Source: RMDB library OK1LIB, as collected in RNAgym. The record gives the reactivity of an RNA of 177 nucleotides to DMS and 2A3. For DMS the reverse transcriptase was MarathonRT.
RNA sequence: GGGAACGACUCGAGUAGAGUCGAAAAGGUUGCUCAUACAGUGCGCCUGAUUCGCGUGACUUCUACAUCCGCCAGUCAGGGUGCAAGUUAAUUUGACAGUCAGGUGAAUGGCCGCGAUUGGCGUGUGGAGAAGGUCUAAGUUCGCUUAGACCUUCUCAAAAGAAACAACAACAACAAC
Reactivity to DMS in 0.01 (KOAc 150mM, MgCl2 10mM, bicine 150mM(pH8.5), 24C), signal-to-noise 3, nucleotides 027 to 126: g010g030u000u010g010c030u040c050a080u010a120c120a110g020u010g000c020g030c000c000u010g020a070u000u000c280g020c030g020u060g000a060c080u020u060c110u030a120c150a270u000c050c010g010c000c050a050g000u000c020a050g000g000g000u020g000c080a040a070g010u020u010a110a090u010u020u030g020a100c080a040g040u010c020a030g000g040u020g000a100a100u010g030g000c000c010g030c060g000a100u000u020g000g000c000g020u010g020u020g000
Reactivity to 2A3 in 0.01 (KOAc 150mM, MgCl2 10mM, bicine 150mM(pH8.5), 24C), signal-to-noise 4, nucleotides 027 to 126: g090g020u070u120g020c010u010c110a050u100a240c080a090g060u060g050c050g030c040c010u040g030a080u030u050c010g000c040g110u230g030a050c060u070u100c020u070a020c020a070u020c030c010g000c020c010a030g060u030c020a020g100g030g000u040g030c000a030a000g020u060u080a120a200u150u120u100g060a060c020a030g050u060c040a040g040g080u090g170a180a050u090g080g000c000c000g070c040g130a120u050u070g030g000c070g000u060g060u100g080
Values cover nucleotides 27 to 126.